An RNA of 177 nucleotides, treated with DMS and 2A3 and read out base by base. The RNA was probed in 150 mM KOAc, 10 mM MgCl2 and 150 mM bicine (pH 8.5) at 24 C. Source: RMDB library OK2TRN, as collected in RNAgym. For 2A3, 1,724 sequencing reads were counted. For DMS the reverse transcriptase was MarathonRT. Reactivities are given for positions 27 through 126. For 2A3 the reverse transcriptase was SuperScript II with manganese.
[RMDB]
RNA sequence: GGGAACGACUCGAGUAGAGUCGAAAACUGGUGUUCGUACGAGGGAGCGCAAACAGCCGGCGGUGCCCGCAAGACCGUCCCGGCCAACGUCUUUCCCGUGCGCGUGAUGUGUUCGGGCCGCGUCGACCGGAGGUAAUCCAUUCGUGGAUUACCUCCGAAAAGAAACAACAACAACAAC
Reactivity to DMS in 0.01 (KOAc 150mM, MgCl2 10mM, bicine 150mM(pH8.5), 24C), signal-to-noise 2, nucleotides 027 to 126: c050u000g000g020u000g010u000u010c050g010u020a040c070g020a050g010g000g000a050g020c050g000c120a030a070a130c190a100g010c020c020g010g010c050g020g000u000g020c050c040c090g010c200a070a140g000a040c020c010g000u010c090c040c010g020g000c030c070a100a050c040g010u010c030u000u000u010c020c000c000g030u000g010c040g010c110g000u020g000a100u000g000u010g010u010u000c050g000g010g050c040c050g010c080g000u000c000g010a090c180
Reactivity to 2A3 in 0.01 (KOAc 150mM, MgCl2 10mM, bicine 150mM(pH8.5), 24C), signal-to-noise 1, nucleotides 027 to 126: c060u040g040g070u160g050u120u110c000g010u060a050c040g030a100g000g010g010a040g000c040g010c070a080a070a150c040a040g030c020c000g040g000c010g000g030u040g090c010c040c040g090c110a050a020g030a040c000c020g050u060c000c080c000g000g000c010c000a070a020c040g030u010c020u050u060u070c010c010c000g060u010g020c020g000c020g030u020g060a170u130g030u040g050u080u050c010g020g010g020c040c000g000c050g020u060c030g010a120c050